[RMDB]
RNA sequence: GGGAACGACUCGAGUAGAGUCGAAAAUUACCCGACGCUACUGAGAGGAGGUGCAUGGCCGCCGUCAGCUCGUACCGUGAGGCGUCCUGUUAAGUCAGGCAACGAGCGAGACCCGCACUUCUAGUUGAACGUCGCUAGAAUUCGUUCUAGCGACGUUAAAAGAAACAACAACAACAAC
Reactivity to 2A3 in 0.01 (KOAc 150mM, MgCl2 10mM, bicine 150mM(pH8.5), 24C), signal-to-noise 2, nucleotides 027 to 126: u040u060a110c000c000c000g040a010c030g050c070u110a070c080u110g060a020g000a080g270g000a010g020g020u000g010c030a050u220g000g000c020c000g020c000c000g080u060c010a010g020c000u030c040g080u100a090c000c070g070u110g000a040g060g040c030g090u270c000c000u080g000u050u070a260a210g270u050c020a000g000g000c000a020a020c000g020a020g040c020g010a060g020a100c000c000c030g000c000a020c020u000u000c030u010a000g030u030u090g060
Reactivity to DMS in 0.01 (KOAc 150mM, MgCl2 10mM, bicine 150mM(pH8.5), 24C), signal-to-noise 2, nucleotides 027 to 126: u030u030a130c010c080c000g030a110c060g010c050u000a000c040u050g010a080g000a120g020g020a080g020g030u030g000c040a060u010g000g000c100c060g000c030c010g020u020c080a180g080c000u000c000g040u030a300c020c060g060u010g000a210g000g000c240g000u000c000c010u000g040u000u010a020a060g000u000c010a050g000g000c300a260a070c040g000a030g010c070g010a060g000a080c020c070c130g030c020a040c020u030u000c050u040a060g000u030u020g020
Source information: Structure probing data (2A3 and DMS) for a 177-nucleotide construct. The reactions ran in a buffer of 150 mM KOAc, 10 mM MgCl2 and 150 mM bicine (pH 8.5), at 24 C. For 2A3 the reverse transcriptase was SuperScript II with manganese. It was measured as part of the RMDB libraries RFM100 and RFMREP. High 2A3 reactivity points to a flexible backbone, as in loops and unpaired stretches.